Chemical mapping of a 207-nucleotide RNA with DMS and 2A3. For 2A3, 532 sequencing reads were counted. For DMS the reverse transcriptase was MarathonRT. It was measured as part of the RMDB library OK3TST.
[RMDB]
RNA sequence: GGGAACGACUCGAGUAGAGUCGAAAACAAAUUUCCGGAAUAGUUGGUCAUUUUAAACUAGUGAAGUGUACCUAAAAUUUAAGGAAACACUUAGAAUUAGUGUAGAAUGAAGACCUCUGUCUUAUUGAGAAGUAAUGAAGUCGAAUUUUGACAGGAAAUAAUGCACUGAUUUCGAUCAGUGCAUUAUAAAAGAAACAACAACAACAAC
Reactivity to DMS in 0.01 (KOAc 150mM, MgCl2 10mM, bicine 150mM(pH8.5), 24C), signal-to-noise 1, nucleotides 027 to 156: c070a080a170a270u010u010u010c010c000g050g020a150a120u000a120g080u020u010g000g000u020c030a020u000u010u000u000a000a030a040c000u000a080g000u000g000a030a050g050u000g000u000a300c020c010u010a080a150a130a190u020u000u000a160a020g020g010a130a110a100c000a020c020u000u010a140g010a170a020u010u000a000g020u010g010u000a060g000a030a040u010g000a040a160g000a100c040c060u000c010u010g000u000c020u020u010a060u020u000g000a220g010a090a130g000u000a050a100u000g020a060a150g000u000c050g000a040a160u000u000u000u000g000a070c030a100g000g000a020a150
Reactivity to 2A3 in 0.01 (KOAc 150mM, MgCl2 10mM, bicine 150mM(pH8.5), 24C), signal-to-noise 2, nucleotides 027 to 156: c030a000a120a000u050u000u040c010c020g070g060a120a050u130a060g070u030u090g030g000u000c010a000u000u000u000u090a050a070a000c000u000a010g050u010g140a020a000g000u020g020u050a000c000c040u080a170a220a260a240u280u280u250a050a060g020g000a110a070a000c000a000c000u000u020a010g100a190a020u040u000a000g040u020g000u030a020g010a030a000u010g020a030a000g010a010c020c020u110c010u040g030u000c000u050u050a050u040u090g020a140g020a110a040g050u170a110a180u240g100a070a020g060u010c010g010a030a040u000u120u100u120g000a000c000a000g000g050a110a000